[RMDB]
RNA sequence: GGGAACGACUCGAGUAGAGUCGAAAAGGCCUUGAGUCCGGCACCGUCGCCGCUCCAUUUUUCCUGGUCCGGCAGGCGUAUCAGUGAGAAGCCAGUUAACGCGGCACGUUCACGCGGGGAUUCCAGCGUUUUACAUGCUUUUCGAAGCAUGUAAAACAAAAGAAACAACAACAACAAC
Reactivity to 2A3 in 0.01 (KOAc 150mM, MgCl2 10mM, bicine 150mM(pH8.5), 24C), signal-to-noise 3, nucleotides 027 to 126: g080g040c010c000u020u070g040a000g030u010c030c030g030g020c040a030c010c040g090u060c090g030c000c020g010c000u010c020c000a040u080u080u000u090u080c000c010u010g030g000u000c040c000g020g010c070a110g090g070c030g000u090a050u110c050a040g020u030g110a020g020a080a000g030c040c010a060g030u090u090a080a030c070g000c010g050g020c010a020c070g030u030u060c070a020c080g000c020g030g120g000g000a040u040u000c040c030a060g030c050
Reactivity to DMS in 0.01 (KOAc 150mM, MgCl2 10mM, bicine 150mM(pH8.5), 24C), signal-to-noise 5, nucleotides 027 to 126: g000g010c030c030u000u000g010a090g020u000c040c030g010g010c060a090c120c050g020u000c090g020c010c020g000c040u000c060c040a090u000u000u000u000u000c070c080u000g010g020u000c080c040g010g020c060a070g020g020c050g010u000a050u010c070a080g020u010g000a060g010a080a110g020c070c050a100g010u000u010a080a110c190g000c060g000g000c020a080c090g010u010u000c070a040c070g020c050g010g000g010g000a160u000u000c020c080a100g010c190

Chemical mapping of a 177-nucleotide RNA with 2A3 and DMS. Values are in units of 0.01, from 0 to 300, in steps of 10. The reactions ran in a buffer of 150 mM KOAc, 10 mM MgCl2 and 150 mM bicine (pH 8.5), at 24 C. High 2A3 reactivity points to a flexible backbone, as in loops and unpaired stretches. DMS adducts were read by reverse transcription with MarathonRT.